[RMDB]
RNA sequence: GGGAACGACUCGAGUAGAGUCGAAAAUUUCCUGUACAGGUUGGGAGAGGUAGCAAUGCUCGGAGUUCAUGUGGUAUUGCACUUGUCCCGGCCUGUGGAGGAAGAAAAAUGUCACCUUCGGGUGACAGUAACCGCAGUAGUUCGCUACUGCGGUUACAAAAGAAACAACAACAACAAC
Reactivity to 2A3 in 0.01 (KOAc 150mM, MgCl2 10mM, bicine 150mM(pH8.5), 24C), signal-to-noise 1, nucleotides 027 to 126: u000u000u030c000c000u000g030u020a000c000a000g000g030u020u030g010g030g000a060g000a000g000g100u120a060g070c020a010a000u010g000c000u030c060g150g080a280g170u280u300c100a190u200g060u110g030g030u020a000u010u000g000c000a010c000u050u030g200u060c000c000c020g000g020c040c010u000g000u020g010g100a020g020g020a010a020g040a100a150a050a000a020u140g010u000c000a000c030c000u030u080c240g160g000g020u020g000a000c020a010